[RMDB]
RNA sequence: GGGAACGACUCGAGUAGAGUCGAAAAAGUAAAAGGUAACUUUGCAUCCGGUAAAAGGUCCGUUGUGACUAUGAGCAAUAUUUCCUGUCCCCAACGUGGAAAUGUCAGAGAGUGAAGUAGCCACAGGGAAAGGCAGGAUAUUCGUAUCCUGCCUUUCAAAAGAAACAACAACAACAAC
Reactivity to 2A3 in 0.01 (KOAc 150mM, MgCl2 10mM, bicine 150mM(pH8.5), 24C), signal-to-noise 1, nucleotides 027 to 126: a000g130u130a040a100a060a000g030g020u020a030a030c030u000u030u030g040c020a190u010c020c020g020g040u050a020a100a030a000g070g040u000c020c040g230u120u040g040u110g060a000c000u040a040u130g050a020g040c040a010a090u000a050u050u060u010c020c020u050g050u070c010c000c000c020a050a040c100g080u040g010g010a030a020a030u040g030u000c020a010g090a020g030a030g150u020g060a060a000g000u020a020g060c020c010a040c020a040g100g060
Reactivity to DMS in 0.01 (KOAc 150mM, MgCl2 10mM, bicine 150mM(pH8.5), 24C), signal-to-noise 3, nucleotides 027 to 126: a100g000u020a070a060a100a050g000g020u000a080a060c050u000u000u000g000c050a110u010c040c050g010g000u020a060a090a090a130g020g010u000c010c020g040u010u000g020u020g000a030c020u000a040u010g010a170g010c070a070a030u010a050u000u000u000c030c000u000g010u000c050c010c010c070a060a120c120g020u000g020g010a010a030a040u010g010u000c040a060g020a120g000a160g010u010g010a020a090g020u000a090g010c000c020a040c120a070g010g010
Annotation:
An RNA of 177 nucleotides, treated with 2A3 and DMS and read out base by base. It was measured as part of the RMDB library OK2TRN. As a SHAPE reagent, 2A3 marks flexible, mostly unpaired nucleotides at the ribose 2'-OH. For 2A3, 1,358 sequencing reads were counted. The RNA was probed in 150 mM KOAc, 10 mM MgCl2 and 150 mM bicine (pH 8.5) at 24 C.